[RMDB]
RNA sequence: GGGAACGACUCGAGUAGAGUCGAAAAUCGCGGCGGGCGAUAUCAGCAAAUUUGGCAUCGAGGAUCUUCGCCAGAUCGCCUGCCGCCAGUUCGAUAUCCAGCCCGCGCUUACCGCCGGAAACAUAAACAGUACCCACUACUUCGGUAGUGGGUACUGAAAAGAAACAACAACAACAAC
Reactivity to DMS in 0.01 (KOAc 150mM, MgCl2 10mM, bicine 150mM(pH8.5), 24C), signal-to-noise 1, nucleotides 027 to 126: u010c190g020c000g010g050c000g030g010g010c010g000a050u000a020u000c190a130g020c110a070a080a120u000u020u000g020g010c020a020u010c080g040a110g000g030a170u000c070u010u000c170g000c020c170a080g030a040u000c010g020c000c000u010g000c010c140g000c040c050a050g000u020u040c020g000a100u000a120u000c010c090a170g000c080c000c020g080c070g000c020u000u000a150c110c210g010c050c100g020g000a080a100a040c100a130u000a080a070a080
Reactivity to 2A3 in 0.01 (KOAc 150mM, MgCl2 10mM, bicine 150mM(pH8.5), 24C), signal-to-noise 1, nucleotides 027 to 126: u110c010g000c000g030g000c010g000g010g020c000g020a010u020a020u150c060a010g170c050a080a130a160u140u130u090g020g000c000a030u060c080g050a080g090g090a170u040c070u080u100c130g010c030c000a020g010a020u020c010g010c020c000u000g000c000c000g000c000c000a000g010u090u110c030g020a000u030a120u070c020c010a050g040c000c000c000g030c030g000c020u050u100a120c040c090g060c030c010g000g000a000a060a040c020a040u140a110a150a010
Description: Chemical mapping of a 177-nucleotide RNA with DMS and 2A3. The data come from the RNA Mapping Database (RMDB), library OK2TST. For 2A3, 874 sequencing reads were counted. The reactions ran in a buffer of 150 mM KOAc, 10 mM MgCl2 and 150 mM bicine (pH 8.5), at 24 C. For DMS the reverse transcriptase was MarathonRT. The DMS profile rests on 807 reads.